[RMDB]
RNA sequence: GGGAACGACUCGAGUAGAGUCGAAAAUACGCUAAAGCUGCGUGAGUUAAUCUCCUUUUGGAGCUGGACUGAUUAGAAUUUCUAGCGUUUUAAUCGCUCCAUAACCUUAAGCUAGACGCUUUUAAAAGGUGGUUCGCCUUUUAAACUAAGAAACAAGGAAUACUUUCCACUUCGGUGGAAAGUAUUCAAAAGAAACAACAACAACAAC
Reactivity to 2A3 in 0.01 (KOAc 150mM, MgCl2 10mM, bicine 150mM(pH8.5), 24C), signal-to-noise 2, nucleotides 027 to 156: u110a020c030g000c030u150a260a050a160g110c150u090g060c050g030u040g040a050g020u070u160a050a090u070c020u080c020c000u100u170u120u230g000g000a030g030c070u050g030g010a030c020u050g000a020u000u010a000g010a000a000u050u050u070c020u010a000g000c000g020u000u000u000u000a000a000u020c010g030c020u000c040c010a140u130a150a160c000c020u090u120a050a010g010c000u010a010g020a020c040g040c020u000u070u000u010a000a000a000a000g010g000u040g020g140u040u040c040g010c000c000u010u030u000u030a000a010a000c010u120a190a020g070a180a150a020c090a110a000g110